[RMDB]
An RNA of 177 nucleotides, treated with 2A3 and DMS and read out base by base. For 2A3 the reverse transcriptase was SuperScript II with manganese. The 2A3 profile rests on 576 reads.

RNA sequence: GGGAACGACUCGAGUAGAGUCGAAAAGAACAGAAUGCCGCACUGGCUGCCCUGAUGAGAACAUACCCGUGACUAGCGUCGAAACAUCAACAGUGCGGGCUGUUGGUGUCGGAAGCCACUAAAAGAAACUGGACCGUAGUUUCGACUACGGUCCAGUAAAAGAAACAACAACAACAAC
Reactivity to 2A3 in 0.01 (KOAc 150mM, MgCl2 10mM, bicine 150mM(pH8.5), 24C), signal-to-noise 1, nucleotides 027 to 126: g030a070a010c200a000g010a080a050u300g030c000c000g040c150a030c020u060g120g000c020u120g000c000c000c000u060g120a150u140g000a000g060a010a010c000a000u000a140c030c000c010g020u000g070a050c020u020a170g000c000g000u100c000g080a080a020a000c030a060u030c000a000a030c000a010g030u000g050c050g000g030g040c000u000g000u000u000g000g000u000g000u060c000g000g160a020a000g000c050c000a060c130u100a070a060a000a000g120a060a060
Reactivity to DMS in 0.01 (KOAc 150mM, MgCl2 10mM, bicine 150mM(pH8.5), 24C), signal-to-noise 1, nucleotides 027 to 126: g000a120a120c120a020g000a030a060u030g010c000c000g000c060a090c000u050g000g000c000u000g020c060c000c010u000g050a040u000g000a250g010a000a090c090a050u060a080c300c140c010g040u060g000a110c140u050a210g010c020g030u030c050g010a090a080a000c030a010u000c000a010a010c000a000g000u000g000c190g000g000g020c000u000g040u020u010g000g020u000g060u000c010g010g010a130a140g010c050c020a050c030u000a030a040a100a050g010a030a110